[RMDB]
This 177-nucleotide RNA was probed chemically with DMS. The reactions ran in a buffer of 150 mM KOAc, 10 mM MgCl2 and 150 mM bicine (pH 8.5), at 24 C. In probing experiments dimethyl sulfate is read out at A N1 and C N3, which are open when not base-paired.

RNA sequence: GGGAACGACUCGAGUAGAGUCGAAAAGAUAUGGAGUAGCCGACAGGGAGCAAAUUGUGCCGUUUGACGUAAUCGGAAACGAUUACCGAGGCAUUAUUUGCUUUGAUCUGUCGGCUACUCCUAAGUCCUCAUCGAUUUAGUUCGCUAAAUCGAUGAGAAAAGAAACAACAACAACAAC
Reactivity to DMS in 0.01 (KOAc 150mM, MgCl2 10mM, bicine 150mM(pH8.5), 24C), signal-to-noise 1, nucleotides 027 to 126: g020a100u000a300u000g010g000a010g020u000a020g030c040c000g000a000c010a020g010g000g000a000g020c000a020a000a000u000u000g020u000g020c000c000g010u000u020u010g020a190c300g010u020a000a020u010c010g030g010a160a120a280c000g000a000u000u000a000c010c040g010a090g000g030c000a010u000u000a010u000u000u000g000c000u000u000u030g020a040u010c000u000g000u000c010g010g000c000u000a000c000u010c010c000u000a000a070g020u000c040